[RMDB]
RNA sequence: GGGAACGACUCGAGUAGAGUCGAAAAGUCUUGCACGUAGUGUGAAAGUGUCUAAUUUCGGUUUGAUCUACGUAGAUCUACAAAAAAUGCGGGAGAAGAGACACACAGUUCUCAACUGAUUUCGCAUCGCGAUAAAUGAUUUCGAUCAUUUAUCGCGAAAAGAAACAACAACAACAAC
Reactivity to DMS in 0.01 (KOAc 150mM, MgCl2 10mM, bicine 150mM(pH8.5), 24C), signal-to-noise 2, nucleotides 027 to 126: g000u010c030u100u030g000c090a010c030g000u000a080g050u000g000u000g010a110a030a180g000u000g000u000c000u000a110a250u020u000u030c010g000g020u010u000u060g000a020u000c000u000a090c300g010u040a030g000a000u000c060u020a020c150a000a010a020a030a060a000u010g000c000g010g020g000a020g000a070a030g010a010g000a030c090a080c090a110c060a000g000u010u000c000u000c070a010a250c110u030g010a300u000u000u000c030g010c070a150u000
Reactivity to 2A3 in 0.01 (KOAc 150mM, MgCl2 10mM, bicine 150mM(pH8.5), 24C), signal-to-noise 6, nucleotides 027 to 126: g040u050c040u070u180g030c020a010c040g240u220a180g060u030g010u010g150a120a100a090g080u080g040u060c020u080a100a220u000u070u060c040g020g000u040u050u170g000a000u000c010u050a130c140g120u090a040g000a040u000c030u050a050c130a020a130a010a010a000a000u260g080c020g010g010g020a030g030a100a020g020a010g000a040c010a000c000a010c010a080g040u070u000c040u020c010a030a120c060u040g040a280u010u050u020c010g000c000a010u000
The record gives the reactivity of an RNA of 177 nucleotides to DMS and 2A3. The 2A3 profile rests on 3,293 reads. The RNA was probed in 150 mM KOAc, 10 mM MgCl2 and 150 mM bicine (pH 8.5) at 24 C.